The record gives the reactivity of an RNA of 177 nucleotides to 2A3 and DMS. DMS adducts were read by reverse transcription with MarathonRT. It was measured as part of the RMDB libraries RFM100 and RFMREP. For 2A3 the reverse transcriptase was SuperScript II with manganese. The reactions ran in a buffer of 150 mM KOAc, 10 mM MgCl2 and 150 mM bicine (pH 8.5), at 24 C.
RNA sequence: GGGAACGACUCGAGUAGAGUCGAAAAAUUGUAAGAGUAGAAGGAUCCAUGAAGCAAUAACUCUCUUUGCUGAAAUGUGCGACCAAAUAGACUCUUGAUAUUUCAUUCUUACAGUGCCCAUUGAUUAAUCACCGAUAAGGUUCGCCUUAUCGGUGAUAAAAGAAACAACAACAACAAC
Reactivity to 2A3 in 0.01 (KOAc 150mM, MgCl2 10mM, bicine 150mM(pH8.5), 24C), signal-to-noise 4, nucleotides 027 to 126: a010u010u030g010u010a010a010g010a010g020u180a090g020a100a050g040g010a010u010c010c020a010u050g060a030a000g000c010a010a030u070a210a160c010u010c020u030c000u180u040u020g000c000u020g000a070a070a060u210g030u060g040c110g030a030c040c000a030a040a080u150a050g100a080c040u040c000u130u060g040a030u020a050u070u050u040c020a000u020u000c000u010u020a010c000a010g040u060g040c020c000c000a040u060u140g030a040u050u090a040
Reactivity to DMS in 0.01 (KOAc 150mM, MgCl2 10mM, bicine 150mM(pH8.5), 24C), signal-to-noise 4, nucleotides 027 to 126: a020u030u010g000u000a010a000g020a020g020u000a080g020a050a040g000g010a060u010c020c040a040u000g000a160a040g000c010a010a030u000a060a080c190u070c140u040c140u000u010u000g000c000u000g010a070a100a030u000g010u000g000c120g000a110c080c060a080a040a050u020a090g000a070c100u010c090u030u000g010a030u000a030u040u000u000c010a040u000u010c000u010u000a000c020a020g010u000g000c000c000c000a180u020u010g010a120u010u050a120